[RMDB]
RNA sequence: GGGAACGACUCGAGUAGAGUCGAAAAUUUUGAGCUUUCGAGCUCAAAACAACUGGUGUCCCGACCAGGAAAAACAGAUUUACACGUAGUGAAAGAUCGAAAGGGCCACCAUGUUCGCAUGGUGGAAGUAUUGAGUGGUGUUCGCACCACUCAAUACAAAAGAAACAACAACAACAAC
Reactivity to 2A3 in 0.01 (KOAc 150mM, MgCl2 10mM, bicine 150mM(pH8.5), 24C), signal-to-noise 2, nucleotides 027 to 126: u000u020u010u000g000a000g010c010u060u040u150c230g100a000g000c000u000c000a010a000a000a010c020a020a150c000u030g000g020u000g010u020c030c010c020g030a000c010c010a000g110g100a070a060a010a010a000c040a020g040a020u080u050u130a020c040a030c160g300u300a120g030u040g080a140a080a030g030a030u030c010g000a120a070a060g060g050g030c010c000a000c010c000a010u010g050u020u090c290g000c070a010u010g000g000u000g010g010a000a010
Reactivity to DMS in 0.01 (KOAc 150mM, MgCl2 10mM, bicine 150mM(pH8.5), 24C), signal-to-noise 1, nucleotides 027 to 126: u000u000u000u000g000a000g010c000u000u000u020c160g010a060g050c010u010c000a000a000a000a050c210a130a080c000u010g000g000u000g000u000c000c000c010g000a070c010c000a030g000g020a090a030a050a050a090c170a210g010a040u000u020u000a300c040a060c010g040u000a150g010u000g020a030a090a100g020a020u000c000g010a050a100a010g020g000g000c000c000a010c000c000a000u000g000u000u000c180g010c010a020u000g000g000u000g000g000a000a070
Background:
An RNA of 177 nucleotides, treated with 2A3 and DMS and read out base by base. DMS adducts were read by reverse transcription with MarathonRT. For 2A3 the reverse transcriptase was SuperScript II with manganese. The reactions ran in a buffer of 150 mM KOAc, 10 mM MgCl2 and 150 mM bicine (pH 8.5), at 24 C.